[RMDB]
RNA sequence: GGGAACGACUCGAGUAGAGUCGAAAAGUAUCCCUAGAAGAUAAAACACCGCACAUGGCUCGUAAGAGCGGUUAAAUUAGCAAGUAAUGCAAAUUACGCGAGGUAACGCAUGGCCUAGGCUCGUUAGAAAAGGGAGAAUCCUUCGGGAUUCUCCCAACAAUCUCCUGUAGUUCGCUACAGGAGAUUGAAAAGAAACAACAACAACAAC
Reactivity to 2A3 in 0.01 (KOAc 150mM, MgCl2 10mM, bicine 150mM(pH8.5), 24C), signal-to-noise 2, nucleotides 027 to 156: g060u040a100u060c010c000c020u010a060g110a230a010g030a060u160a100a120a050a000c050a060c040c010g030c010a050c030a120u070g000g040c030u050c120g050u130a070a060g030a010g020c020g020g000u040u030a080a110a080u080u090a020g070c050a150a000g010u060a150a070u060g040c070a050a030a060u120u020a050c050g030c020g020a050g020g070u020a070a000c070g000c070a060u020g040g010c020c010u050a070g040g030c030u000c040g020u060u050a040g100a100a260a020a000g000g000g000a010g000a000a000u010c010c000u010u040c160g010g000g010a000u000u000c000u000c000c000c000a000a000
Reactivity to DMS in 0.01 (KOAc 150mM, MgCl2 10mM, bicine 150mM(pH8.5), 24C), signal-to-noise 2, nucleotides 027 to 156: g030u010a140u000c010c010c000u050a140g010a160a170g020a200u000a030a110a100a120c070a060c010c000g010c030a120c040a140u000g020g000c000u000c030g010u010a100a170g000a130g040c000g040g000u010u000a010a080a120u000u000a080g060c030a070a120g020u000a070a050u000g000c060a090a130a090u000u000a040c040g030c040g010a100g020g030u000a100a060c050g000c010a050u000g040g020c030c030u010a100g010g000c010u010c070g010u000u010a090g010a050a090a100a190g000g010g010a020g000a080a040u000c000c010u000u000c280g030g020g000a020u000u000c000u000c000c000c000a000a000
Structure probing data (2A3 and DMS) for a 207-nucleotide construct. Conditions: 150 mM KOAc, 10 mM MgCl2 and 150 mM bicine (pH 8.5), 24 C. For 2A3, 887 sequencing reads were counted. Source: RMDB library M2RFPK, as collected in RNAgym. High DMS reactivity at an A or C suggests that its Watson-Crick edge is free.